The record gives the reactivity of an RNA of 207 nucleotides to 2A3. The reactions ran in a buffer of 150 mM KOAc, 10 mM MgCl2 and 150 mM bicine (pH 8.5), at 24 C.
[RMDB]
RNA sequence: GGGAACGACUCGAGUAGAGUCGAAAAAGGUAUCAUCAUUUGCCAGUUUUCUAUUGAACCAGUGCAGUCGAGCUGGCUACUUGACAAUGGCAUUGUGAGAAAAUUAGGCUACUAUUCCUUAUCACUGAAGGGUGUAACAUGCCCUUAGGAACUAUCGCGAGUUAGCUCAGUUCGCUGAGCUAACUCGAAAAGAAACAACAACAACAAC
Reactivity to 2A3 in 0.01 (KOAc 150mM, MgCl2 10mM, bicine 150mM(pH8.5), 24C), signal-to-noise 1, nucleotides 027 to 156: a010g080g010u050a010u040c050a000u010c000a010u280u240u030g000c010c010a000g010u000u000u080u040c020u010a280u140u100g030a040a020c020c020a000g000u000g000c010a010g010u000c020g000a010g040c040u000g020g020c000u030a010c000u000u000g000a000c000a030a200u080g090g010c000a010u000u000g010u030g120a040g000a000a070a000a000u080u040a120g010g010c000u000a040c010u050a040u010u010c000c020u060u090a060u070c090a030c070u130g100a010a000g020g000g070u040g020u040a070a060c040a120u250g000c020c000c000u000u030a000g000g040a000a040c110u060a060u230c040g020